[RMDB]
RNA sequence: GGGAACGACUCGAGUAGAGUCGAAAAGCCAGGCCUGCUAGGCCUCUGGGUGACAGAGAGGGGACCCACCUCGACAGCUCGGGCCACGUCCUUAAACUCCCGAGCCUGCUGUGGCCACUUUGCUGUGAGAUAUUCACGGGUUCGCCCGUGAAUAUCUAAAAGAAACAACAACAACAAC
Reactivity to DMS in 0.01 (KOAc 150mM, MgCl2 10mM, bicine 150mM(pH8.5), 24C), signal-to-noise 2, nucleotides 027 to 126: g000c030c060a050g010g030c010c010u010g030c200u010a040g030g000c030c030u020c070u000g020g010g020u010g010a110c060a090g010a130g020a170g000g010g000g040a120c070c020c020a160c040c100u000c000g010a080c140a070g000c020u000c030g000g010g000c250c110a070c140g000u010c090c090u000u010a040a160a110c110u000c010c000c000g000a050g000c020c020u010g000c080u000g000u000g030g020c020c040a130c020u010u000u000g000c030u010g020u000g000
Reactivity to 2A3 in 0.01 (KOAc 150mM, MgCl2 10mM, bicine 150mM(pH8.5), 24C), signal-to-noise 1, nucleotides 027 to 126: g000c010c000a020g000g000c000c010u160g160c180u270a020g000g000c000c000u000c060u070g060g000g020u130g010a040c040a010g050a000g010a020g030g000g000g100a070c000c010c010a020c000c020u020c010g030a010c010a020g000c000u000c000g020g000g050c010c040a060c050g050u040c000c000u130u160a090a170a090c020u020c010c010c020g020a030g090c000c010u080g000c000u020g010u040g010g030c040c000a080c050u080u060u150g020c030u000g030u030g120

Structure probing data (DMS and 2A3) for a 177-nucleotide construct.
The DMS profile rests on 1,605 reads.
DMS adducts were read by reverse transcription with MarathonRT.
The RNA was probed in 150 mM KOAc, 10 mM MgCl2 and 150 mM bicine (pH 8.5) at 24 C.